[RMDB]
RNA sequence: GGGAACGACUCGAGUAGAGUCGAAAAAAAAAGGACGACGACGACAGGAACAGCAGCAGCAGCUGACUAACCGACAACAGCAUACGACAGCAAGGAGGUGGAAGGUAACUAACACAACACAAAAAAACUACUAAACAAAGUUCGCUUUGUUUAGUAGAAAAGAAACAACAACAACAAC
Reactivity to DMS in 0.01 (KOAc 150mM, MgCl2 10mM, bicine 150mM(pH8.5), 24C), signal-to-noise 2, nucleotides 027 to 126: a020a050a050a120a070g000g010a060c050g010a070c090g050a030c060g000a080c110a050g000g020a050a050c100a040g020c040a050g000c010a050g020c060a050g000c020u000g010a080c090u000a090a100c080c050g020a050c100a020a030c040a050g000c020a060u000a080c120g010a070c060a060g020c080a050a050g020g010a030g020g000u000g020g000a070a020g000g000u010a030a050c060u000a060a050c050a050c090a020a070c070a030c090a000a010a060a110a050a040a100
Reactivity to 2A3 in 0.01 (KOAc 150mM, MgCl2 10mM, bicine 150mM(pH8.5), 24C), signal-to-noise 1, nucleotides 027 to 126: a000a000a000a000a000g080g000a010c040g020a010c050g010a010c010g000a020c040a060g030g020a120a020c000a030g000c010a000g000c000a000g040c020a010g010c000u000g040a080c020u020a010a060c020c010g060a030c020a130a010c000a060g000c020a030u070a130c060g050a030c060a010g020c050a020a080g040g000a030g020g020u050g010g030a000a000g030g000u040a050a050c000u050a080a010c090a000c000a100a080c030a010c050a090a060a000a000a000a020a080
Source: RMDB library M2PK90, as collected in RNAgym. Chemical mapping of a 177-nucleotide RNA with DMS and 2A3. For DMS, 1,522 sequencing reads were counted.